[RMDB]
Chemical mapping of a 177-nucleotide RNA with DMS and 2A3. For 2A3 the reverse transcriptase was SuperScript II with manganese. The DMS profile rests on 2,381 reads. DMS adducts were read by reverse transcription with MarathonRT. Reactivities are rounded to 0.1 and cut off at 0 and 3. The RNA was probed in 150 mM KOAc, 10 mM MgCl2 and 150 mM bicine (pH 8.5) at 24 C.
RNA sequence: GGGAACGACUCGAGUAGAGUCGAAAAUCAUGUUUAUUCGUAAACAUGAAACGCGGCACGGCGCGCCUGGCCACCAGGGAACGUGGAUAUGGAAGCCUGAGAAUGAGGUGCCGUUCGCGGCACCUAAUGCUCUGUUAAAUUUCGAUUUAACAGAGCAAAAAGAAACAACAACAACAAC
Reactivity to DMS in 0.01 (KOAc 150mM, MgCl2 10mM, bicine 150mM(pH8.5), 24C), signal-to-noise 3, nucleotides 027 to 126: u000c010a000u000g000u000u000u000a020u010u010c210g030u000a020a000a020c000a010u010g000a010a100a140c100g000c040g010g010c050a070c090g010g010c030g030c070g000c030c030u000g010g000c030c010a060c040c060a070g000g000g030a050a080c140g000u010g010g010a080u010a070u000g010g010a160a100g000c040c010u000g000a130g000a110a080u010g010a050g010g010u000g020c000c000g040u000u010c170g000c020g000g000c000a010c000c000u000a020a050
Reactivity to 2A3 in 0.01 (KOAc 150mM, MgCl2 10mM, bicine 150mM(pH8.5), 24C), signal-to-noise 1, nucleotides 027 to 126: u010c010a000u000g000u000u030u010a090u020u090c250g080u040a000a000a000c000a000u000g000a030a000a000c090g000c040g080g000c030a000c100g030g000c010g010c050g050c020c020u020g000g090c050c030a050c020c030a050g070g010g020a090a000c040g050u030g000g050a040u050a040u150g100g030a080a040g020c020c020u040g020a050g120a100a160u150g060a020g030g000u000g010c000c000g010u030u010c190g010c000g050g070c010a040c000c000u000a000a000